[RMDB]
RNA sequence: GGGAACGACUCGAGUAGAGUCGAAAAUCGUGAGAUGUGGUGCCUCACGCGCUCGAGGCGUCCGUGGUCAGAGAGACCACUGACGCAAAAACUCGAGCGCAAAUAAAUCGCAUUACAUACAGAAUAAAUGCUACCUAUUAUUCGUAAUAGGUAGCAUAAAAGAAACAACAACAACAAC
Reactivity to 2A3 in 0.01 (KOAc 150mM, MgCl2 10mM, bicine 150mM(pH8.5), 24C), signal-to-noise 5, nucleotides 027 to 126: u160c040g000u030g020a110g000a050u210g020u010g000g000u000g010c010c000u060c010a030c080g000c000g000c000u000c000g000a000g000g000c000g000u000c010c010g000u000g000g000u000c040a040g110a060g020a020g000a300c000c000a000c000u000g000a000c000g000c000a080a070a030a020a030c000u000c000g000a000g000c000g000c000a000a000a000u070a000a040a020u130c050g000c010a000u010u040a000c000a010u120a060c090a060g250a130a100u180a140a130
Reactivity to DMS in 0.01 (KOAc 150mM, MgCl2 10mM, bicine 150mM(pH8.5), 24C), signal-to-noise 6, nucleotides 027 to 126: u020c080g020u030g000a060g010a060u020g010u000g000g040u000g010c010c060u000c080a040c170g000c000g030c000u000c000g010a020g000g010c010g000u000c010c100g020u000g020g010u020c010a180g020a200g020a270g000a000c000c000a010c000u000g000a010c000g030c030a030a030a050a090a300c010u000c000g000a000g000c010g040c010a020a050a060u020a070a060a070u040c240g020c010a020u000u000a010c020a080u040a080c110a080g010a110a060u030a070a100

Chemical mapping of a 177-nucleotide RNA with 2A3 and DMS. Conditions: 150 mM KOAc, 10 mM MgCl2 and 150 mM bicine (pH 8.5), 24 C. The DMS profile rests on 16,072 reads. The data come from the RNA Mapping Database (RMDB), library OK1LIB. For DMS the reverse transcriptase was MarathonRT.